[RMDB]
RNA sequence: GGGAACGACUCGAGUAGAGUCGAAAAUCAGCUUCGGCUGACACGGAACCUUUGUGCACACGUAGUGUAUGGAGAUUAUCCUCCUCCCAUUGGGAGGAGGUAAGAUCUAUGAAGUACAUGAAGUGUGCACUCUGGUGUAUACUCGUUUCGACGAGAACUAAUAAGAAGCUUUCGAGCUUCUUAUUAGAAAAGAAACAACAACAACAAC
Reactivity to DMS in 0.01 (KOAc 150mM, MgCl2 10mM, bicine 150mM(pH8.5), 24C), signal-to-noise 3, nucleotides 027 to 156: u000c020a000g020c020u010u000c300g080g030c000u010g000a020c040a080c090g000g000a180a030c020c010u000u000u000g030u000g000c020a020c020a040c030g040u010a300g010u000g010u000a010u000g010g000a010g030a040u000u000a270u010c000c000u000c000c000u000c000c000c010a300u000u000g040g030g020a020g000g000a010g000g000u000a000a090g000a030u000c020u010a250u000g000a130a280g000u000a010c000a020u000g000a160a300g010u000g010u000g000c010a000c010u000c020u010g000g010u000g010u000a110u010a070c000u000c000g030u010u010u000c190g020a040c010g010a040g010a090a300
Reactivity to 2A3 in 0.01 (KOAc 150mM, MgCl2 10mM, bicine 150mM(pH8.5), 24C), signal-to-noise 6, nucleotides 027 to 156: u030c000a000g010c000u050u110c190g180g010c000u000g020a020c050a020c100g120g120a040a030c000c010u010u000u010g000u000g000c000a010c000a000c000g030u050a010g000u010g000u000a000u030g030g020a010g000a010u020u010a050u130c000c000u000c000c000u000c010c010c030a300u210u300g020g000g000a000g000g000a000g000g000u000a020a010g000a000u000c000u010a300u110g040a020a010g010u010a000c000a000u030g060a080a010g000u000g000u000g000c000a000c000u000c000u000g000g000u010g030u020a080u050a080c010u010c010g010u040u140u100c220g120a040c000g010a000g020a050a020
An RNA of 207 nucleotides, treated with DMS and 2A3 and read out base by base. It was measured as part of the RMDB library RNAMAK.